Conditions: 150 mM KOAc, 10 mM MgCl2 and 150 mM bicine (pH 8.5), 24 C. This 177-nucleotide RNA was probed chemically with DMS and 2A3. As a SHAPE reagent, 2A3 marks flexible, mostly unpaired nucleotides at the ribose 2'-OH.
RNA sequence: GGGAACGACUCGAGUAGAGUCGAAAAGUAUGACUGCAAAUGGUACAUUCCGCUCACGGAUCUCAGCUUCCAGAUGGUGGAUGAACUGGAGGCAGUGCCCAACAUCCCCCUGGUGCCCGAUGAGGAGGUUCUACCGAUGUUUCGACAUCGGUAGAACAAAAGAAACAACAACAACAAC
Reactivity to DMS in 0.01 (KOAc 150mM, MgCl2 10mM, bicine 150mM(pH8.5), 24C), signal-to-noise 3, nucleotides 027 to 126: g000u000a030u010g040a040c080u000g020c040a020a080a190u000g010g000u000a060c050a090u000u000c000c010g020c030u000c120a110c120g010g010a040u000c080u010c230a090g020c060u010u000c010c010a060g020a220u000g000g040u010g000g000a060u020g020a100a090c090u000g000g000a200g000g010c060a040g000u000g020c050c020c030a070a110c090a030u000c020c010c010c020c060u000g000g030u000g010c000c010c020g010a100u000g000a050g000g000a080g000
Reactivity to 2A3 in 0.01 (KOAc 150mM, MgCl2 10mM, bicine 150mM(pH8.5), 24C), signal-to-noise 2, nucleotides 027 to 126: g030u070a050u200g080a020c010u000g040c040a050a110a170u190g050g000u030a040c010a030u140u020c000c020g000c020u080c030a070c050g050g070a080u040c110u050c140a040g020c070u130u040c000c000a080g020a250u210g070g040u080g020g030a040u020g050a090a050c050u010g030g010a040g040g160c040a040g040u050g040c020c010c000a000a040c030a060u070c000c030c000c060c020u030g010g090u030g000c020c020c010g020a090u110g040a040g010g040a020g050
It was measured as part of the RMDB library OK2TRN. For DMS, 1,985 sequencing reads were counted.